[RMDB]
RNA sequence: GGGAACGACUCGAGUAGAGUCGAAAACAAAAAGCGCACUUGUCGCGUAACAAGCAAACAAAAAGACCAGGAUUGUCGUAAAUCCCAAACAAAAAGCCCAGAUGUGGCGUAACAUCGAAACAACAAAGGGUAAGAAUAUCUUCGGAUAUUCUUACCCAAAAGAAACAACAACAACAAC
Reactivity to DMS in 0.01 (KOAc 150mM, MgCl2 10mM, bicine 150mM(pH8.5), 24C), signal-to-noise 3, nucleotides 027 to 126: c080a050a050a170a040a150g010c030g000c090a170c020u030u000g010u010c000g010c080g010u030a020a080c080a080a120g050c140a060a050a170c130a020a060a020a070a080g020a120c110c040a050g000g000a040u000u010g020u000c010g040u040a060a100a130u000c000c000c070a020a090a080c180a030a050a030a020a110g020c030c000c030a170g000a010u000g010u020g020g100c040g000u010a060a020c040a020u010c060g000a060a030a100c170a070a120c240a040a070a090
Reactivity to 2A3 in 0.01 (KOAc 150mM, MgCl2 10mM, bicine 150mM(pH8.5), 24C), signal-to-noise 2, nucleotides 027 to 126: c060a000a090a100a000a010g040c060g020c020a070c040u020u010g010u040c020g010c000g090u170a030a030c060a070a000g150c030a010a000a300c030a070a210a040a000a000g030a030c000c000a000g040g050a140u020u100g000u080c040g050u090a030a030a030u000c000c020c010a010a090a050c000a010a110a040a050a030g000c010c020c000a030g040a060u030g010u060g020g000c070g030u040a000a000c010a000u040c030g050a170a060a070c110a130a020c080a070a060a000

The record gives the reactivity of an RNA of 177 nucleotides to DMS and 2A3. For DMS the reverse transcriptase was MarathonRT.